[RMDB]
RNA sequence: GGGAACGACUCGAGUAGAGUCGAAAAAUCUAGUGAAUCGCCGUAGUGCAGCGUGUUCGUCCGCGUCGCUACGGUUAAAUCAAAUGACAGAACUAAACAUGUAGAACUGGUCGUAGAGUGCUUCUGGACGCGGGUUCGAUUCCCGCCGCCUCCACCACUAUCUGUACGAGUUCGCUCGUACAGAUAGAAAAGAAACAACAACAACAAC
Reactivity to DMS in 0.01 (KOAc 150mM, MgCl2 10mM, bicine 150mM(pH8.5), 24C), signal-to-noise 2, nucleotides 027 to 156: a130u000c030u000a080g020u000g010a120a100u000c120g040c020c010g040u000a010g040u000g020c150a140g000c020g000u000g040u000u000c140g000u000c090c000g000c020g060u000c050g030c010u000a020c000g020g000u000u000a010a050a150u000c110a050a100a150u000g010a090c020a090g000a200a230c040u010a020a050a080c080a110u000g010u010a080g000a060a150c090u000g020g020u000c030g060u000a130g020a120g000u000g010c010u000u000c020u000g000g020a020c120g040c010g030g000g000u000u000c080g020a300u000u000c000c010c000g020c050c050g000c000c000u000c030c070a100c080c060a120
Reactivity to 2A3 in 0.01 (KOAc 150mM, MgCl2 10mM, bicine 150mM(pH8.5), 24C), signal-to-noise 2, nucleotides 027 to 156: a000u080c080u080a050g060u030g140a050a080u080c050g000c010c020g000u000a010g000u000g060c090a010g000c030g010u060g070u010u070c060g020u050c020c000g000c000g070u080c010g000c010u000a000c000g000g000u000u010a010a010a010u060c010a000a000a030u100g020a010c110a200g010a020a010c000u050a080a110a050c070a070u080g060u230a010g060a100a040c060u050g010g030u060c040g000u030a010g030a030g030u150g050c030u110u110c040u140g040g030a040c080g000c000g030g000g030u040u040c010g040a020u020u050c010c000c000g000c010c020g010c020c000u040c030c020a000c000c010a040